[RMDB]
RNA sequence: GGGAACGACUCGAGUAGAGUCGAAAACAAGUCACGUCUGAAAAGCGAAAGCCCUAAGAUAUGCAGCUGUGAAGACUUGACGCAGCGCCGCCCGCAGAACUUCGGUUCUGCAAAAGAAACAACAACACCGAUCAUAGCAGUUCGCUGCUAUGAUCGGAAAAGAAACAACAACAACAAC
Reactivity to 2A3 in 0.01 (KOAc 150mM, MgCl2 10mM, bicine 150mM(pH8.5), 24C), signal-to-noise 1, nucleotides 027 to 126: c000a000a000g000u020c000a000c060g120u040c080u050g010a080a060a000a000g000c000g140a260a010a030g010c000c080c080u090a130a060g030a230u270a050u170g020c020a040g000c020u010g000u000g040a050a000g000a030c060u140u000g130a100c010g040c050a040g020c020g000c000c010g010c000c000c000g010c010a040g000a000a000c000u000u110c150g000g000u000u020c000u000g000c000a000a000a000a000g020a020a050a000c020a000a000c070a000a050c000a030
Annotation:
Structure probing data (2A3) for a 177-nucleotide construct. Source: RMDB library OK1LIB, as collected in RNAgym. The reactions ran in a buffer of 150 mM KOAc, 10 mM MgCl2 and 150 mM bicine (pH 8.5), at 24 C. For 2A3, 504 sequencing reads were counted.